[RMDB]
RNA sequence: GGGAACGACUCGAGUAGAGUCGAAAAUGUCCAGUCCCUCCCCGCUCCUGGAGAAGGGAGACUCGGGAACGCCUAGCAUCUGAGGGACAAAGCCGCCCCCGGGCGCUCCCCUCGGAGGUCCACUGGGAAACUAUGAGGUUCGCCUCAUAGAAAAGAAACAACAACAACAAC
Reactivity to 2A3 in 0.01 (KOAc 150mM, MgCl2 10mM, bicine 150mM(pH8.5), 24C), signal-to-noise 9, nucleotides 027 to 129: u120g040u010c000c000a000g030u000c010c000c000u020c010c000c000c010g020c010u030c000c020u100g090g070a150g050a120a090g050g030g000a010g020a020c040u020c040g010g000g020a040a030c030g030c010c020u020a030g040c020a080u020c030u060g030a050g020g020g000a020c040a030a050a010g040c060c040g020c010c010c000c020c020g040g010g000c030g010c010u010c000c000c000c000u010c010g020g000a020g020g040u060c040c020a060c050u060g010g010g000a030a030a030
Reactivity to DMS in 0.01 (KOAc 150mM, MgCl2 10mM, bicine 150mM(pH8.5), 24C), signal-to-noise 8, nucleotides 027 to 129: u050g000u050c010c000a050g010u000c020c040c020u020c020c010c030c080g040c040u010c030c010u040g020g040a060g010a130a110g000g020g010a040g000a120c030u030c090g030g000g030a070a070c160g030c010c010u030a050g020c130a090u010c030u030g000a040g020g020g030a050c090a050a110a090g010c040c070g030c040c030c000c060c130g020g020g030c030g010c070u030c030c010c010c010u010c030g000g000a020g000g040u040c030c070a110c040u040g000g000g000a130a080a140